[RMDB]
RNA sequence: GGGAACGACUCGAGUAGAGUCGAAAAAUGCGAUUAUCACCACCGAUGUGGGUCAGCAUCAGAUGUGGACCGCGCAAGCUUAUCCGCUCAAUCGCCCACGCCAGUGGCUGACCUCCGGCGGGCUGGGCACGUAAUCACCUUUCGAGGUGAUUACGUGAAAAGAAACAACAACAACAAC
Reactivity to 2A3 in 0.01 (KOAc 150mM, MgCl2 10mM, bicine 150mM(pH8.5), 24C), signal-to-noise 4, nucleotides 027 to 126: a010u170g030c070g080a100u100u080a110u260c040a040c080c000a000c020c000g050a070u070g010u090g010g020g010u010c010a000g000c000a030u120c040a060g050a090u070g020u030g010g030a080c080c070g010c030g050c300a040a000g000c000u150u160a050u170c060c050g000c030u000c010a030a040u040c010g010c000c000c010a010c000g010c020c030a070g050u120g190g000c000u000g020a010c000c000u010c000c020g030g010c020g040g020g010c080u090g000g010g000
Reactivity to DMS in 0.01 (KOAc 150mM, MgCl2 10mM, bicine 150mM(pH8.5), 24C), signal-to-noise 5, nucleotides 027 to 126: a070u010g000c060g010a120u000u010a070u010c070a230c010c020a100c020c030g010a070u000g030u000g010g020g020u000c010a030g010c000a080u000c080a130g010a100u000g010u000g000g000a080c130c210g000c080g000c250a060a030g000c030u000u010a120u010c220c190g000c010u000c070a060a160u000c080g000c050c010c010a020c050g020c040c030a080g010u000g010g010c020u000g000a020c000c010u000c050c020g000g010c030g010g010g010c120u010g010g000g010
Background:
Chemical mapping of a 177-nucleotide RNA with 2A3 and DMS. Conditions: 150 mM KOAc, 10 mM MgCl2 and 150 mM bicine (pH 8.5), 24 C. For DMS the reverse transcriptase was MarathonRT.